An RNA of 177 nucleotides, treated with DMS and 2A3 and read out base by base. 2A3 adducts were read by reverse transcription with SuperScript II with manganese. For 2A3, 1,203 sequencing reads were counted.
[RMDB]
RNA sequence: GGGAACGACUCGAGUAGAGUCGAAAACGAAUAUCGACGAUUGCCUGGGCGAGAUCAAGUGCCAGAACAAUGCCACCUGCAUCGACGGAGUGGAGUCGUACAAAUGUGAGUGCCAGCCGGGAUUCAGCUCGUGGAGUAUUUUCGAAUACUCCACGAGAAAAGAAACAACAACAACAAC
Reactivity to DMS in 0.01 (KOAc 150mM, MgCl2 10mM, bicine 150mM(pH8.5), 24C), signal-to-noise 2, nucleotides 027 to 126: c050g010a110a100u000a110u010c080g000a100c070g000a050u000u000g020c030c040u000g000g000g010c050g010a150g010a090u010c120a060a140g000u020g020c010c000a080g010a050a100c140a070a080u000g000c070c020a070c040c010u000g000c130a110u010c090g010a090c050g010g000a070g010u000g020g000a040g000u000c080g010u010a120c100a040a080a070u000g000u000g000a070g020u010g010c000c040a110g010c030c060g040g010g000a060u010u000c070a100g000
Reactivity to 2A3 in 0.01 (KOAc 150mM, MgCl2 10mM, bicine 150mM(pH8.5), 24C), signal-to-noise 2, nucleotides 027 to 126: c040g050a040a060u110a060u210c040g050a030c050g000a030u070u100g030c030c020u020g020g020g040c030g020a100g000a050u100c030a130a030g020u000g150c020c010a000g060a060a030c040a020a120u070g030c000c010a040c010c040u040g000c000a150u090c060g090a110c030g050g020a050g050u090g030g050a020g020u040c040g010u050a030c050a110a080a040u140g010u060g060a070g040u040g070c020c030a000g030c080c010g060g000g020a030u110u060c010a040g000